[RMDB]
RNA sequence: GGGAACGACUCGAGUAGAGUCGAAAAGAACCAUCCAUAUUAACGUACACAACACGAACUCACUGUGUGGUUGAGAAGAUGAGGUCUAUGACGGCACCGCAAUGCAUUGAGGAUAUUGUAGGAGUAACCGUUCUGCAGAAUUCGUUCUGCAGAACGGAAAAGAAACAACAACAACAAC
Reactivity to DMS in 0.01 (KOAc 150mM, MgCl2 10mM, bicine 150mM(pH8.5), 24C), signal-to-noise 2, nucleotides 027 to 126: g000a100a100c040c020a040u010c040c050a010u000a100u030u000a050a040c090g040u010a060c030a090c040a020a040c170a090c130g000a140a150c150u000c040a140c170u020g000u000g020u000g000g010u000u000g020a040g000a080a080g000a060u000g000a040g000g000u020c100u000a100u000g010a080c100g000g020c050a010c030c050g000c050a010a020u000g000c100a120u010u010g000a040g000g010a030u030a040u000u000g000u050a070g000g000a050g000u020a100a140
Reactivity to 2A3 in 0.01 (KOAc 150mM, MgCl2 10mM, bicine 150mM(pH8.5), 24C), signal-to-noise 1, nucleotides 027 to 126: g050a010a020c010c010a050u000c020c030a020u040a030u100u080a050a000c050g040u100a010c040a010c000a120a030c040a040c100g070a220a090c030u000c000a060c080u030g050u040g000u000g010g000u050u100g010a010g050a080a000g040a040u060g030a020g060g060u020c000u040a160u140g040a030c030g030g000c050a030c060c000g000c040a010a010u050g090c030a040u060u160g080a080g010g040a090u030a030u160u050g060u080a070g060g050a050g000u090a050a010